[RMDB]
Source: RMDB library OK2TRN, as collected in RNAgym. The record gives the reactivity of an RNA of 177 nucleotides to DMS and 2A3. For 2A3, 1,563 sequencing reads were counted. For 2A3 the reverse transcriptase was SuperScript II with manganese. For DMS the reverse transcriptase was MarathonRT. High DMS reactivity at an A or C suggests that its Watson-Crick edge is free.
RNA sequence: GGGAACGACUCGAGUAGAGUCGAAAAGAUGGGGCAGGGUGACAGGGUUGGGGAGCCUCUUUGCCCUUAAGUCCCAGGUCAGCUGUCAGAGCCUGGGUGCAGCUCGCCAUCCCUGGAGUGGAUACCACAAAAUGGGUUUGUUCGCAAACCCAUUUUGAAAAGAAACAACAACAACAAC
Reactivity to DMS in 0.01 (KOAc 150mM, MgCl2 10mM, bicine 150mM(pH8.5), 24C), signal-to-noise 2, nucleotides 027 to 126: g000a140u000g010g010g000g000c090a120g000g000g000u000g010a150c130a090g000g000g010u010u000g020g010g000g020a030g010c030c020u000c020u020u010u010g000c010c040c020u000u000a060a150g010u010c000c000c010a050g000g020u000c060a140g000c090u020g000u000c070a110g000a170g000c020c010u000g000g010g000u000g010c070a120g020c030u000c030g020c030c040a070u000c010c030c010u000g000g000a090g010u000g000g040a120u000a080c070c050a190
Reactivity to 2A3 in 0.01 (KOAc 150mM, MgCl2 10mM, bicine 150mM(pH8.5), 24C), signal-to-noise 1, nucleotides 027 to 126: g060a050u050g020g030g050g050c110a040g080g040g000u040g040a110c060a030g020g020g030u110u080g010g000g010g000a000g000c020c010u070c040u090u110u050g050c000c000c020u010u030a000a000g030u060c010c000c010a000g020g000u020c020a040g000c030u120g090u200c030a030g010a030g150c000c010u010g000g020g020u030g000c020a030g040c010u010c020g080c020c000a040u030c030c000c000u000g020g000a040g010u040g000g070a060u100a180c020c040a000